[RMDB]
Source: RMDB library RFM100, as collected in RNAgym. The record gives the reactivity of an RNA of 177 nucleotides to 2A3 and DMS. 2A3 adducts were read by reverse transcription with SuperScript II with manganese. Conditions: 150 mM KOAc, 10 mM MgCl2 and 150 mM bicine (pH 8.5), 24 C. For 2A3, 1,050 sequencing reads were counted. For DMS, 1,357 sequencing reads were counted.
RNA sequence: GGGAACGACUCGAGUAGAGUCGAAAACCGUUCCCGAGAUCAGUUCUCCUUCUGGUAAGGGCCCAGGUAGAACACCUGGUCGAUAGGCCGCAGGUGCAAGGUCGGCGACGGCCUCAGCCGAGCGGCAAUCGAUGGGGGGGUUCGCCCCCCCAUCGAUAAAAGAAACAACAACAACAAC
Reactivity to 2A3 in 0.01 (KOAc 150mM, MgCl2 10mM, bicine 150mM(pH8.5), 24C), signal-to-noise 2, nucleotides 027 to 126: c030c020g000u000u000c010c000c000g000a020g010a140u080c070a010g040u000u040c000u030c010c020u110u090c040u170g050g070u140a130a150g030g020g020c060c020c010a020g020g020u020a040g100a110a030c070a030c020c000u040g020g030u000c010g100a090u050a190g050g060c000c000g000c000a020g000g000u030g030c120a080a020g000g010u010c000g000g000c020g030a040c000g020g000c020c000u010c040a010g010c000c000g020a020g030c000g000g050c010a000
Reactivity to DMS in 0.01 (KOAc 150mM, MgCl2 10mM, bicine 150mM(pH8.5), 24C), signal-to-noise 2, nucleotides 027 to 126: c030c060g000u000u000c040c010c050g000a000g080a040u030c030a080g000u000u010c000u000c000c010u000u010c130u080g020g020u010a030a210g000g000g000c110c070c020a030g000g080u010a030g000a040a280c140a090c000c000u000g000g000u000c050g000a070u000a140g010g000c000c000g090c030a300g000g000u000g000c300a300a000g000g080u010c000g020g000c220g000a240c000g020g000c000c000u010c070a300g000c000c010g000a140g000c000g000g010c000a000